This 177-nucleotide RNA was probed chemically with DMS.
Conditions: 150 mM KOAc, 10 mM MgCl2 and 150 mM bicine (pH 8.5), 24 C.
Source: RMDB library OK2TST, as collected in RNAgym.

[RMDB]
RNA sequence: GGGAACGACUCGAGUAGAGUCGAAAAUGAACCUGGGUCCUCUGCAAGGGUAGCAGAAGCUUUUCGCUGCUGAGCCAUCUCUGCAGCCCCAGAGUUGCAUCCUUAGAGCGUUUAGGAAACUGGAAGAGCUGAUCACCACGUUCGCGUGGUGAUCAGCAAAAGAAACAACAACAACAAC
Reactivity to DMS in 0.01 (KOAc 150mM, MgCl2 10mM, bicine 150mM(pH8.5), 24C), signal-to-noise 1, nucleotides 027 to 126: u010g010a030a020c010c010u000g000g000g000u000c170c150u000c000u000g010c000a010a030g010g000g050u010a090g010c000a060g000a270a030g010c020u000u000u000u000c170g000c060u000g010c010u020g010a300g010c040c100a100u010c030u000c110u000g010c000a070g030c300c000c020c010a000g000a130g050u000u000g000c070a090u000c010c020u000u010a090g000a150g040c100g000u000u000u000a120g020g020a050a070a100c060u000g010g000a090a070g020a150